[RMDB]
RNA sequence: GGGAACGACUCGAGUAGAGUCGAAAAUAGGAAGCCUUCUUAACAGCUCUUUUUCUGGAAUAUCCAUGGGCAAACCACAUAGUAGAAACAGCAAAACCAGCUGCGAUGUGGGCAUACAGGCUAAUCAACUAAAAUGAUACUUCGGUAUCAUUUUAGUAAAAGAAACAACAACAACAAC
Reactivity to DMS in 0.01 (KOAc 150mM, MgCl2 10mM, bicine 150mM(pH8.5), 24C), signal-to-noise 7, nucleotides 027 to 126: u010a110g010g010a160a120g000c000c010u000u000c090u000u010a110a110c140a200g010c030u010c010u010u000u000u010u010c080u010g010g010a160a130u010a120u010c020c030a060u000g000g000g000c030a100a080a130c020c010a020c030a020u000a080g020u010a050g010a080a080a070c050a020g000c060a040a040a110a160c140c090a090g000c010u000g000c020g010a020u000g010u000g010g000g000c120a070u010a070c160a030g010g010c030u000a060a100u010c100a080
Reactivity to 2A3 in 0.01 (KOAc 150mM, MgCl2 10mM, bicine 150mM(pH8.5), 24C), signal-to-noise 4, nucleotides 027 to 126: u160a030g050g060a030a020g010c010c010u040u030c040u070u120a120a050c040a070g010c000u030c000u050u140u040u170u070c070u080g040g050a190a140u130a070u220c020c030a070u090g000g000g000c010a060a030a030c020c000a010c000a030u030a020g130u030a030g120a090a140a020c030a020g040c040a000a010a080a150c020c030a020g000c000u000g000c020g020a010u020g000u000g000g010g000c010a040u120a060c060a010g020g000c000u020a030a100u110c040a040
Overview
This 177-nucleotide RNA was probed chemically with DMS and 2A3. For 2A3, 6,988 sequencing reads were counted. Reactivities are given for positions 27 through 126. For DMS, 8,158 sequencing reads were counted.